[RMDB]
RNA sequence: GGGAACGACUCGAGUAGAGUCGAAAAGAUAUGGAGAUAUCCGUUGUGACAUCGAUCUCGGAAACGAGGGAGUCACUGCGGAGUAUCUCCUAAGUCAAACUGAACUCCUCUUCGGAGGAGUUCAGAACUCUACAUAUAGGUUCGCCUAUAUGUAGAGAAAAGAAACAACAACAACAAC
Reactivity to DMS in 0.01 (KOAc 150mM, MgCl2 10mM, bicine 150mM(pH8.5), 24C), signal-to-noise 5, nucleotides 027 to 126: g010a060u000a300u010g000g000a010g010a010u000a020u000c000c000g010u000u000g000u000g000a010c010a270u000c150g010a060u010c000u010c000g000g000a120a080a180c010g010a020g020g000g000a010g000u000c000a000c010u000g010c000g010g000a030g010u010a000u000c000u000c000c000u000a000a070g000u000c020a090a120a230c000u000g000a020a000c000u000c000c010u000c000u000u010c230g020g010a010g010g010a010g010u000u000c010a010g000a050a110
Reactivity to 2A3 in 0.01 (KOAc 150mM, MgCl2 10mM, bicine 150mM(pH8.5), 24C), signal-to-noise 4, nucleotides 027 to 126: g020a030u100a050u180g000g000a010g000a000u000a000u020c010c000g000u020u030g000u020g010a020c030a290u300c180g090a130u030c020u010c000g030g040a110a100a060c010g000a010g000g030g010a010g000u010c000a000c010u010g000c010g000g000a010g010u010a000u000c000u000c000c000u000a040a000g010u000c040a100a050a080c000u000g000a000a010c000u000c000c010u020c020u070u100c300g100g000a000g000g000a000g010u010u000c000a000g000a000a000

Source: RMDB library TTRDEL, as collected in RNAgym.
This 177-nucleotide RNA was probed chemically with DMS and 2A3.
Values cover nucleotides 27 to 126.
Values are in units of 0.01, from 0 to 300, in steps of 10.
DMS adducts were read by reverse transcription with MarathonRT.
For DMS, 8,571 sequencing reads were counted.
2A3 adducts were read by reverse transcription with SuperScript II with manganese.
The RNA was probed in 150 mM KOAc, 10 mM MgCl2 and 150 mM bicine (pH 8.5) at 24 C.